Structure probing data (DMS and 2A3) for a 177-nucleotide construct.
RNA sequence: GGGAACGACUCGAGUAGAGUCGAAAACAUGUGAUUCACAUCACAGUCAAUAACCCACGAUGUCAAAGAACAAAAGUGUUGGAUCCACUUUUGACAGGUUACCAUGUGCCACAUUGACCCGUGACACGACUAAGGGCCUGUUCGCAGGCCCUUAGUCAAAAGAAACAACAACAACAAC
Reactivity to DMS in 0.01 (KOAc 150mM, MgCl2 10mM, bicine 150mM(pH8.5), 24C), signal-to-noise 1, nucleotides 027 to 126: c220a130u000g000u000g000a010u000u000c300a150c230a090u000c000a000c020a000g000u000c110a080a040u000a060a030c000c060c000a100c020g000a140u000g000u000c000a110a050a130g000a120a120c080a030a010a040a000g000u000g000u000u000g000g030a070u040c200c000a030c000u000u000u000u000g000a250c080a080g000g060u020u000a160c060c060a070u000g000u040g020c040c060a060c150a040u010u000g010a190c010c200c210g000u050g000a130c130a030c080
Reactivity to 2A3 in 0.01 (KOAc 150mM, MgCl2 10mM, bicine 150mM(pH8.5), 24C), signal-to-noise 3, nucleotides 027 to 126: c060a140u000g010u000g000a020u180u230c060a020c010a070u030c000a010c030a000g010u070c090a070a110u070a080a070c000c030c000a010c040g050a090u100g070u110c080a020a050a070g090a110a150c010a010a000a040a000g020u000g000u060u140g120g020a060u030c000c000a000c000u000u000u000u060g020a070c050a050g040g000u080u080a080c000c100a090u090g030u090g010c000c040a050c010a080u000u140g090a070c010c050c010g070u080g030a040c060a030c100
High DMS reactivity at an A or C suggests that its Watson-Crick edge is free. The reactions ran in a buffer of 150 mM KOAc, 10 mM MgCl2 and 150 mM bicine (pH 8.5), at 24 C. For DMS, 963 sequencing reads were counted. For DMS the reverse transcriptase was MarathonRT.